[RMDB]
The record gives the reactivity of an RNA of 207 nucleotides to DMS and 2A3. Source: RMDB library RNAMAK, as collected in RNAgym.

RNA sequence: GGGAACGACUCGAGUAGAGUCGAAAAGAUAUGGAAGUGCGAAGAACUGGUAAUUACAUGUGCGUUGAUCACAGCUCGGAAACGAGCUGUGGGAGCACACCACCAGGGAGCACUUCCUAAGUCAAAACUAUUUGUACUGUUCGCAGUACAAAUAGAAUCUUUCAUCACAGUUCGCUGUGAUGAAAGAAAAAGAAACAACAACAACAAC
Reactivity to DMS in 0.01 (KOAc 150mM, MgCl2 10mM, bicine 150mM(pH8.5), 24C), signal-to-noise 1, nucleotides 027 to 156: g020a130u030a260u030g000g020a030a010g040u030g010c000g000a140a100g000a140a180c020u020g000g000u010a080a100u000u000a090c130a070u010g030u000g020c030g020u000u030g020a150u030c000a000c000a000g000c010u000c000g010g020a150a060a200c000g020a080g040c000u010g070u010g000g010g000a080g060c000a000c010a020c040c090a030c000c040a010g000g000g000a300g000c000a020c000u000u030c000c000u000a020a030g030u000c110a050a070a120a150c010u010a010u000u000u000g030u010a010c000u020g000u000u010c300g000c040a000g020u000a000c000a000a030a000u000a020g000a020a060
Reactivity to 2A3 in 0.01 (KOAc 150mM, MgCl2 10mM, bicine 150mM(pH8.5), 24C), signal-to-noise 4, nucleotides 027 to 156: g010a010u050a030u120g000g010a000a020g010u000g010c050g150a260a040g020a130a070c010u010g000g040u100a190a220u280u200a130c150a210u130g000u010g010c020g240u300u030g000a010u010c010a000c000a000g000c000u000c000g040g010a060a080a050c000g000a000g000c010u000g000u000g000g000g000a010g010c000a010c010a000c000c000a010c000c000a000g000g000g020a030g000c000a000c000u000u000c000c000u000a020a010g010u010c020a010a000a080a110c000u000a000u000u000u000g000u000a000c000u010g080u080u100c300g000c130a000g000u000a000c000a000a010a000u000a000g000a000a020